Chemical mapping of a 177-nucleotide RNA with DMS and 2A3. The 2A3 profile rests on 1,450 reads. Values are in units of 0.01, from 0 to 300, in steps of 10. Values cover nucleotides 27 to 126. It was measured as part of the RMDB library OK1LIB. The reactions ran in a buffer of 150 mM KOAc, 10 mM MgCl2 and 150 mM bicine (pH 8.5), at 24 C.

[RMDB]
RNA sequence: GGGAACGACUCGAGUAGAGUCGAAAACAACCUUUGAGUAAUUUUUCUCAAAAGAGGCACUUUUGCGCUGGGCCGCAGGAAAUUUCCCUUUCUGUUCAGCACCUGUUGUCCUAUAUUAAGCUGUGCCAUUUACGCUCAUCUUCGGAUGAGCGUAAAUAAAAGAAACAACAACAACAAC
Reactivity to DMS in 0.01 (KOAc 150mM, MgCl2 10mM, bicine 150mM(pH8.5), 24C), signal-to-noise 3, nucleotides 027 to 126: c090a110a190c170c010u000u010u010g000a010g020u030a050a080u050u040u060u050u000c020u010c000a000a040a040a070g000a100g000g000c010a000c010u000u020u040u020g040c110g030c150u010g000g020g000c030c130g000c090a030g010g000a080a050a110u040u000u000c000c030c000u010u010u010c120u000g000u020u010c100a100g010c060a180c060c060u000g010u000u000g030u010c040c030u030a050u000a120u030u000a060a110g010c060u000g000u000g000c030c010
Reactivity to 2A3 in 0.01 (KOAc 150mM, MgCl2 10mM, bicine 150mM(pH8.5), 24C), signal-to-noise 3, nucleotides 027 to 126: c030a020a140c020c030u000u020u020g060a070g080u080a150a280u070u150u050u200u080c000u000c000a020a020a000a030g140a110g010g000c000a010c020u070u090u300u260g040c080g040c090u040g010g030g010c020c000g010c000a010g000g020a050a060a070u010u020u060c010c010c020u000u090u030c080u110g170u090u090c060a040g020c020a060c030c010u020g000u020u030g020u000c020c040u050a050u020a070u220u120a070a010g020c060u050g000u000g020c010c000